Description:
An RNA of 177 nucleotides, treated with 2A3 and DMS and read out base by base. The 2A3 profile rests on 1,136 reads. The DMS profile rests on 772 reads. Reactivities are given for positions 27 through 126. Conditions: 150 mM KOAc, 10 mM MgCl2 and 150 mM bicine (pH 8.5), 24 C. For 2A3 the reverse transcriptase was SuperScript II with manganese.
[RMDB]
RNA sequence: GGGAACGACUCGAGUAGAGUCGAAAAGUGUUAGCGUUCGCGCUAACACAAAGAACGCUGCAACGCGCAGCGCGCUCGCGAGAGCACGAAUGAGCGUUAUAAAAAGCUCGGGCUUCGGCCCGAGCAACAAUCCUUCUGUGUUCGCACAGAAGGAUUGAAAAGAAACAACAACAACAAC
Reactivity to 2A3 in 0.01 (KOAc 150mM, MgCl2 10mM, bicine 150mM(pH8.5), 24C), signal-to-noise 1, nucleotides 027 to 126: g000u000g000u020u000a010g000c020g000u030u050c260g000c000g000c070u000a000a000c000a000c010a010a000a000g040a080a000c020g000c030u060g000c050a090a140c070g040c020g000c060a000g000c010g000c010g000c000u010c020g000c000g030a090g000a020g070c050a040c100g080a080a190u160g020a050g000c030g010u090u080a190u130a190a250a020a030a010g000c000u020c000g000g020g000c030u030u060c210g030g000c030c000c000g000a000g000c000a000a000
Reactivity to DMS in 0.01 (KOAc 150mM, MgCl2 10mM, bicine 150mM(pH8.5), 24C), signal-to-noise 1, nucleotides 027 to 126: g000u000g000u000u000a000g000c000g030u000u000c200g010c010g020c000u010a010a020c000a010c010a050a090a100g000a120a150c120g010c070u010g010c060a040a050c060g020c040g000c000a030g000c020g000c030g010c000u000c010g030c300g000a180g000a020g000c010a010c070g010a070a070u000g030a050g030c010g000u000u000a230u010a090a190a120a160a110g000c000u000c000g000g000g000c020u020u000c270g040g000c000c000c000g020a020g020c000a010a040